This 177-nucleotide RNA was probed chemically with 2A3 and DMS. Values cover nucleotides 27 to 126. For 2A3 the reverse transcriptase was SuperScript II with manganese. The reactions ran in a buffer of 150 mM KOAc, 10 mM MgCl2 and 150 mM bicine (pH 8.5), at 24 C. The DMS profile rests on 7,058 reads.
[RMDB]
RNA sequence: GGGAACGACUCGAGUAGAGUCGAAAAGAUAUGGACUGAACUACUGAACCAAGUGCGUUGAAAUCGGAAACGAUGGAGCAUCAAAGUCAGCAGUCCUAAGUCAAACUCACUCCUUCGGGAGUGAGAAUCGAUAAACUGAGUUCGCUCAGUUUAUCGAAAAAGAAACAACAACAACAAC
Reactivity to 2A3 in 0.01 (KOAc 150mM, MgCl2 10mM, bicine 150mM(pH8.5), 24C), signal-to-noise 6, nucleotides 027 to 126: g030a010u060a030u140g000g010a000c000u010g010a110a040c050u150a040c010u300g020a090a030c030c030a210a100g000u010g000c020g200u300u110g060a070a070a020u000c010g020g010a060a030a020c010g000a000u010g010g040a020g000c000a000u160c090a070a060a040g020u010c000a000g000c000a000g000u000c000c000u010a090a000g020u000c020a060a030a120c010u000c010a000c000u010c010c000u050u110c300g140g000g000a000g000u000g000a000g000a000a050
Reactivity to DMS in 0.01 (KOAc 150mM, MgCl2 10mM, bicine 150mM(pH8.5), 24C), signal-to-noise 6, nucleotides 027 to 126: g000a040u000a300u010g000g010a020c000u000g020a050a040c080u010a300c010u000g010a030a040c030c060a120a260g010u000g000c000g000u010u010g010a120a140a030u000c010g010g000a110a070a170c000g020a000u000g010g000a100g010c000a000u010c030a060a140a190g000u000c010a010g000c000a020g000u000c020c000u010a030a100g010u000c030a060a110a240c000u000c000a010c000u000c000c000u000u010c210g020g010g010a010g020u000g000a000g000a030a040